[RMDB]
RNA sequence: GGGAACGACUCGAGUAGAGUCGAAAAUGACCCAGCUGCCCUGCUGCCCUGAGCACUUGGCUGAGGGUGGCAGAAGCACUCAGCUAACCCAAAGUGACACAUGCCUGGUGGGACAUACAGGAUACACUAUUGACUUGGAUUUCGAUCCAAGUCAAUAAAAAGAAACAACAACAACAAC
Reactivity to DMS in 0.01 (KOAc 150mM, MgCl2 10mM, bicine 150mM(pH8.5), 24C), signal-to-noise 5, nucleotides 027 to 126: u020g010a110c000c000c010a070g000c060u010g000c240c150c000u000g000c000u000g000c010c000c000u000g000a020g010c000a210c270u040u030g010g040c000u000g000a020g000g000g020u000g000g010c000a010g000a040a160g020c060a120c130u010c110a030g020c030u010a110a130c030c010c030a070a090a100g010u020g010a090c150a060c150a060u010g000c010c010u020g020g020u000g000g000g000a080c060a060u010a040c030a030g010g010a040u010a080c100a040c070
Reactivity to 2A3 in 0.01 (KOAc 150mM, MgCl2 10mM, bicine 150mM(pH8.5), 24C), signal-to-noise 8, nucleotides 027 to 126: u080g040a030c010c000c000a010g010c030u020g010c020c020c000u000g000c000u010g000c000c000c000u050g050a000g000c010a110c290u210u280g260g000c000u040g150a000g000g000g010u010g000g000c000a000g000a000a000g000c010a030c020u090c020a020g020c020u060a110a170c010c000c020a050a080a020g040u040g050a030c020a010c010a170u200g050c000c000u020g020g010u040g020g010g030a020c010a020u140a020c000a000g000g010a030u050a050c040a010c010

Annotation:
Chemical mapping of a 177-nucleotide RNA with DMS and 2A3. For DMS the reverse transcriptase was MarathonRT. 2A3 adducts were read by reverse transcription with SuperScript II with manganese. The reactions ran in a buffer of 150 mM KOAc, 10 mM MgCl2 and 150 mM bicine (pH 8.5), at 24 C. Reactivities are given for positions 27 through 126.